[RMDB]
RNA sequence: GGGAACGACUCGAGUAGAGUCGAAAAGAUAUGGAGCAAGUGGAGUAUGUUGCCUACUUUGAUCUGGAAGCAUCGGAAACGAUGCUUCCAGGGAGUAGGCUCAUACUGCGAAGCUUGCUCCUAAGUCCUUAGGAGCUUGGUUCGCCAAGCUCCUAAGAAAAGAAACAACAACAACAAC
Reactivity to DMS in 0.01 (KOAc 150mM, MgCl2 10mM, bicine 150mM(pH8.5), 24C), signal-to-noise 1, nucleotides 027 to 126: g000a130u000a300u000g000g010a000g030c000a030a040g040u000g000g000a040g000u000a020u000g020u000u010g020c010c000u000a020c000u000u020u010g010a090u040c000u000g000g000a020a010g010c000a020u010c010g010g000a120a140a300c010g030a010u000g010c050u000u000c000c000a000g000g000g000a010g020u000a000g000g040c020u000c000a000u000a000c040u000g000c210g010a170a200g000c000u010u000g010c000u000c010c000u000a000a130g010u000c030
This 177-nucleotide RNA was probed chemically with DMS. DMS adducts were read by reverse transcription with MarathonRT. Source: RMDB library TTRINS, as collected in RNAgym. For DMS, 1,493 sequencing reads were counted. The RNA was probed in 150 mM KOAc, 10 mM MgCl2 and 150 mM bicine (pH 8.5) at 24 C.